[RMDB]
RNA sequence: GGGAACGACUCGAGUAGAGUCGAAAAGAUAUGGACGUCGGUUAUAGCAACAGCUCGGAAACGAGACAUGCUGGAACCACGUCCUAAGUCGAACUAAACAAGAUGCCUUCGGGCAUCUUGUUUAGAACAUCUUCCCAAGGUUCGCCUUGGGAAGAUGAAAAGAAACAACAACAACAAC
Reactivity to 2A3 in 0.01 (KOAc 150mM, MgCl2 10mM, bicine 150mM(pH8.5), 24C), signal-to-noise 2, nucleotides 027 to 126: g010a010u040a040u140g000g000a010c020g010u090c280g000g000u010u030a030u010a040g000c000a020a120c080a140g000c000u010c010g040g020a080a070a050c010g010a010g030a040c030a090u070g000c000u030g020g000a000a000c000c000a010c000g000u030c000c000u010a030a010g020u000c010g030a070a040c000u010a000a010a010c000a000a000g000a010u020g000c000c020u130u200c300g030g000g000c000a000u010c000u000u000g000u000u000u000a000g000a000a000
Reactivity to DMS in 0.01 (KOAc 150mM, MgCl2 10mM, bicine 150mM(pH8.5), 24C), signal-to-noise 3, nucleotides 027 to 126: g000a030u000a300u000g010g010a000c010g010u000c160g030g000u000u000a060u030a040g010c000a040a060c280a150g000c000u000c000g000g000a090a100a140c000g000a010g010a000c120a170u010g000c010u000g000g000a020a000c000c000a020c000g000u010c000c000u000a020a040g000u000c010g010a130a240c020u010a000a010a000c000a000a000g000a010u000g000c000c000u000u020c230g010g010g000c000a000u000c000u000u000g000u010u000u010a010g000a060a180